Structure probing data (2A3 and DMS) for a 177-nucleotide construct. For DMS the reverse transcriptase was MarathonRT. For DMS, 969 sequencing reads were counted. Conditions: 150 mM KOAc, 10 mM MgCl2 and 150 mM bicine (pH 8.5), 24 C. 2A3 adducts were read by reverse transcription with SuperScript II with manganese.
[RMDB]
RNA sequence: GGGAACGACUCGAGUAGAGUCGAAAACGCCGUGCCGAGCUAGCUGAUGACCGAUCGAAAGUCCUUGUGCUGUCGACCCCUAGCGACACGCGAGCCGACGCACUGAGGUGUGGCGAAGUGCUGUCGAUAUCGUCGCUCAGUUCGCUGAGCGACGAUAAAAAGAAACAACAACAACAAC
Reactivity to 2A3 in 0.01 (KOAc 150mM, MgCl2 10mM, bicine 150mM(pH8.5), 24C), signal-to-noise 1, nucleotides 027 to 126: c020g080c050c060g050u050g030c000c000g020a020g010c010u030a000g060c020u050g000a100u070g050a100c070c000g110a140u040c030g050a120a040a080g030u060c030c070u090u060g060u080g030c080u030g000u000c000g010a120c010c000c000c000u010a010g030c000g010a060c010a020c050g010c000g040a010g050c010c010g020a040c030g060c060a010c020u060g060a030g000g090u120g000u050g050g030c010g000a030a000g060u010g000c130u150g000u000c010g010a030
Reactivity to DMS in 0.01 (KOAc 150mM, MgCl2 10mM, bicine 150mM(pH8.5), 24C), signal-to-noise 1, nucleotides 027 to 126: c110g000c000c010g040u000g030c010c010g000a060g030c090u010a120g020c050u000g030a070u000g000a110c080c040g000a060u000c120g010a070a130a070g010u000c040c040u010u000g030u000g030c120u010g000u010c000g000a070c030c010c040c060u010a110g010c030g000a060c010a000c090g020c030g020a110g030c100c040g010a060c020g020c010a050c040u020g010a190g030g010u000g030u000g000g000c000g000a080a080g010u000g030c080u000g010u030c050g000a190